Structure probing data (DMS and 2A3) for a 177-nucleotide construct. Conditions: 150 mM KOAc, 10 mM MgCl2 and 150 mM bicine (pH 8.5), 24 C. Source: RMDB library TTRDES, as collected in RNAgym. Values are in units of 0.01, from 0 to 300, in steps of 10. 2A3 adducts were read by reverse transcription with SuperScript II with manganese. The DMS profile rests on 962 reads.
RNA sequence: GGGAACGACUCGAGUAGAGUCGAAAAGAUAUGGAUCCGUACCUAGCGAUGAAAUACGUCGGAAACGACGUAUGGAGCUAUGUACCGGAUCCUAAGUCAAAUCUUACCGAGUUCGCUCGGUAAGAAAGAAGAGUAAUCCCUUCGGGGAUUACUCUUCAAAAGAAACAACAACAACAAC
Reactivity to DMS in 0.01 (KOAc 150mM, MgCl2 10mM, bicine 150mM(pH8.5), 24C), signal-to-noise 1, nucleotides 027 to 126: g000a020u000a300u000g000g000a030u000c000c000g000u000a000c000c080u000a010g020c000g060a100u030g000a140a190a010u000a000c010g000u010c000g000g000a170a110a270c000g030a010c000g010u000a000u000g010g030a040g000c010u000a000u010g000u000a080c100c080g030g000a000u000c000c000u000a000a050g000u000c060a110a110a180u000c010u000u000a010c000c000g030a000g010u000u010c300g000c000u000c030g010g010u000a000a000g010a010a110a080
Reactivity to 2A3 in 0.01 (KOAc 150mM, MgCl2 10mM, bicine 150mM(pH8.5), 24C), signal-to-noise 1, nucleotides 027 to 126: g030a000u090a080u170g000g000a020u020c000c020g000u000a000c030c020u020a020g060c000g300a300u000g000a020a010a010u010a000c000g000u020c000g000g080a110a080a090c020g010a000c040g010u020a010u000g010g000a000g000c020u000a020u040g020u030a020c050c040g000g010a000u010c000c000u000a030a040g000u010c000a030a030a240u000c010u010u000a000c000c000g020a010g000u030u170c300g090c150u010c000g000g030u010a010a000g000a030a000a000